RNA sequence: GGGAACGACUCGAGUAGAGUCGAAAAGGCAACAAGUUGUCGCGUGCCUCCAUAUCCGGAUUCCUGUGGAGCAUUGCAGGAGGCCCGUUAAGCUGGUCCUCGAAGACUCAAACGUGCAUUGCCACUACCCCCGUCUAAGGUUCGCCUUAGACGGGGGAAAAGAAACAACAACAACAAC
Reactivity to DMS in 0.01 (KOAc 150mM, MgCl2 10mM, bicine 150mM(pH8.5), 24C), signal-to-noise 1, nucleotides 027 to 126: g000g030c040a110a010c100a050a110g000u000u010g040u040c220g060c000g000u000g000c100c000u050c070c050a060u010a060u000c090c060g000g000a040u050u000c000c020u080g040u030g000g000a040g010c020a000u050u060g000c030a090g040g000a100g000g000c020c000c000g000u030u000a030a050g000c010u030g030g000u010c030c030u000c070g000a270a110g000a040c000u030c170a090a130a130c050g000u010g000c170a160u000u000g000c000c000a130c020u000a120
Reactivity to 2A3 in 0.01 (KOAc 150mM, MgCl2 10mM, bicine 150mM(pH8.5), 24C), signal-to-noise 3, nucleotides 027 to 126: g020g030c020a020a020c000a000a150g070u130u030g130u100c050g000c010g000u010g020c010c010u030c000c000a050u040a120u160c010c000g070g020a160u120u100c020c030u080g110u160g050g070a030g010c120a150u050u210g000c060a080g020g030a020g040g030c000c090c000g050u090u210a080a000g090c050u080g010g030u270c010c010u060c030g040a090a030g010a050c040u040c110a030a100a030c020g000u000g000c020a070u000u120g080c070c000a050c020u140a100